RNA sequence: GGGAACGACUCGAGUAGAGUCGAAAAAGCCGACUUACGAGUCGGCAAUGCUGUGUUUGGCAAUGGUAGAACUCACACUGGUGAGGUAAUGGGAUCCGGUGGUUCUAGACUUGCCAACUAUGGCCAAUAUGAACAACGGUUUCGACCGUUGUUCAUAAAAAGAAACAACAACAACAAC
Reactivity to DMS in 0.01 (KOAc 150mM, MgCl2 10mM, bicine 150mM(pH8.5), 24C), signal-to-noise 3, nucleotides 027 to 126: a120g000c010c000g000a030c010u030u040a070c150g020a060g030u000c000g000g000c000a030a020u040g030c020u010g060u000g020u000u000u000g010g000c000a020a010u020g000g000u000a020g000a020a000c020u030c190a300c010a040c030u040g000g000u000g000a300g020g010u020a090a050u010g010g030g020a220u000c000c000g020g010u000g000g010u000u000c010u020a030g010a210c020u000u020g000c000c000a010a010c020u010a020u010g000g000c000c260a070a140
Reactivity to 2A3 in 0.01 (KOAc 150mM, MgCl2 10mM, bicine 150mM(pH8.5), 24C), signal-to-noise 3, nucleotides 027 to 126: a020g000c010c020g000a000c000u000u030a050c120g080a000g010u000c000g000g000c000a000a000u020g000c020u020g000u030g000u090u010u080g010g000c030a050a060u180g130g000u030a000g000a010a000c000u060c180a110c020a000c090u060g000g000u060g050a080g090g120u300a150a280u280g040g080g000a030u000c000c000g000g000u020g020g020u020u010c010u000a010g080a300c010u000u000g000c000c000a000a000c000u020a010u010g020g000c010c000a020a170
Annotation:
The record gives the reactivity of an RNA of 177 nucleotides to DMS and 2A3. 2A3 adducts were read by reverse transcription with SuperScript II with manganese. Conditions: 150 mM KOAc, 10 mM MgCl2 and 150 mM bicine (pH 8.5), 24 C. For DMS the reverse transcriptase was MarathonRT.